The record gives the reactivity of an RNA of 177 nucleotides to 2A3 and DMS. The reactions ran in a buffer of 150 mM KOAc, 10 mM MgCl2 and 150 mM bicine (pH 8.5), at 24 C. Reactivities are rounded to 0.1 and cut off at 0 and 3. Reactivities are given for positions 27 through 126. The 2A3 profile rests on 16,897 reads. The data come from the RNA Mapping Database (RMDB), library TTRINS.
RNA sequence: GGGAACGACUCGAGUAGAGUCGAAAAGAUAUGGAGUGGCUACCCACCGCAUGGGAGCCUUGGACCAUUUAUUUCGUCGGAAACGACGAAAUAAAUGCUAGGCUCAGUGCGAGGCCACUCCUAAGUCCAUUAUUCUAGUCUUCGGACUAGAAUAAUGAAAAGAAACAACAACAACAAC
Reactivity to 2A3 in 0.01 (KOAc 150mM, MgCl2 10mM, bicine 150mM(pH8.5), 24C), signal-to-noise 4, nucleotides 027 to 126: g160a090u260a260u300g010g000a000g010u000g010g020c010u110a300c040c020c000a020c020c010g000c010a010u030g300g300g050a010g010c000c020u020u110g050g050a080c100c000a000u000u010u000a000u010u020u000c000g000u000c010g010g060a080a080a100c020g000a000c000g000a000a000a000u000a000a000a000u000g000c000u010a010g000g000c010u010c030a010g020u010g000c020g000a000g000g000c000c000a000c000u000c000c000u000a010a010g040u000c030
Reactivity to DMS in 0.01 (KOAc 150mM, MgCl2 10mM, bicine 150mM(pH8.5), 24C), signal-to-noise 7, nucleotides 027 to 126: g000a140u010a180u000g010g010a020g030u000g000g000c010u010a120c020c010c030a300c080c010g000c010a020u000g010g010g000a010g020c000c000u000u000g010g000a110c300c010a000u000u000u000a000u000u000u000c000g020u000c000g000g010a110a130a240c010g010a010c000g000a000a010a000u000a000a000a000u000g000c030u000a010g010g010c000u000c000a300g010u000g000c010g000a080g010g000c010c000a010c000u000c000c000u000a000a090g010u010c110